[RMDB]
Source information:
This 177-nucleotide RNA was probed chemically with 2A3 and DMS. Source: RMDB library RFM100, as collected in RNAgym. Reactivities are rounded to 0.1 and cut off at 0 and 3. The reactions ran in a buffer of 150 mM KOAc, 10 mM MgCl2 and 150 mM bicine (pH 8.5), at 24 C.

RNA sequence: GGGAACGACUCGAGUAGAGUCGAAAAUAGAUAGAUGGUGGCUAAUCUCAUGAAAAUGGGGUGAUGCCUAUGGUUUUGGUUUCUACUCCAAGAAAGGAAUAGCAUGACUGAUUAUGAAAUGCUAAUGAAAUGUUCCGGAUUUCGAUCCGGAACAUUUAAAAGAAACAACAACAACAAC
Reactivity to 2A3 in 0.01 (KOAc 150mM, MgCl2 10mM, bicine 150mM(pH8.5), 24C), signal-to-noise 1, nucleotides 027 to 126: u200a000g150a000u000a000g070a100u020g080g150u020g000g000c000u020a000a000u020c000u000c000a000u000g300a040a000a000a000u000g000g010g010g010u000g000a000u230g000c000c000u080a000u050g020g020u070u000u000u070g010g000u000u000u020c000u050a050c070u000c010c010a090a000g120a160a120a150g100g060a000a030u000a130g000c000a050u070g000a000c000u040g000a300u100u280a210u150g110a080a080a080u000g000c000u000a100a100u290g130
Reactivity to DMS in 0.01 (KOAc 150mM, MgCl2 10mM, bicine 150mM(pH8.5), 24C), signal-to-noise 1, nucleotides 027 to 126: u030a050g020a210u060a030g000a090u000g050g090u000g000g000c000u000a200a020u000c000u000c010a000u010g000a040a030a060a050u030g000g000g000g000u000g000a190u040g000c000c000u000a070u030g000g000u000u040u060u000g010g050u000u000u000c030u000a150c180u010c000c050a030a110g000a150a060a160g030g050a080a170u020a000g020c000a010u000g000a300c060u000g000a140u010u050a040u000g000a070a090a000u030g000c010u010a000a000u060g000